[RMDB]
RNA sequence: GGGAACGACUCGAGUAGAGUCGAAAAGUCACGCGCCGAAUUUGUGGCAACGCUGCAGUCGGAGCUGCGUCGUGCAGAGGAAAUGAUUCGGCAGAUGUCUGCGUCCGAGGCAGAGCGCAACGCGCACGAUAUGGGUGCUGUUCGCAGCACCCAUAUCAAAAGAAACAACAACAACAAC
Reactivity to DMS in 0.01 (KOAc 150mM, MgCl2 10mM, bicine 150mM(pH8.5), 24C), signal-to-noise 2, nucleotides 027 to 126: g000u010c070a100c060g010c250g000c010c010g030a040a050u000u020u030g060u010g000g010c040a130a050c150g000c020u040g030c000a060g020u010c010g010g000a190g010c050u000g000c040g000u000c030g020u010g010c000a060g020a080g020g010a020a080a100u060g000a180u030u000c000g000g010c010a110g000a020u030g000u040c030u000g000c020g020u000c010c000g000a050g000g010c000a030g000a050g050c040g050c020a080a080c140g040c000g000c080a170c250
Reactivity to 2A3 in 0.01 (KOAc 150mM, MgCl2 10mM, bicine 150mM(pH8.5), 24C), signal-to-noise 6, nucleotides 027 to 126: g070u050c020a010c110g070c020g030c030c020g050a080a110u100u090u080g100u110g100g010c030a070a050c070g010c030u020g000c010a080g100u040c040g050g030a030g020c010u030g000c010g020u020c020g080u100g010c030a010g030a080g190g180a040a110a180u290g050a110u130u050c000g010g000c000a000g000a020u050g070u080c080u000g000c010g170u000c010c010g010a010g050g000c010a010g020a030g030c020g000c010a060a150c080g030c010g000c010a030c130
Conditions: 150 mM KOAc, 10 mM MgCl2 and 150 mM bicine (pH 8.5), 24 C. Structure probing data (DMS and 2A3) for a 177-nucleotide construct. For 2A3, 4,970 sequencing reads were counted. For DMS the reverse transcriptase was MarathonRT. The data come from the RNA Mapping Database (RMDB), library OK1LIB.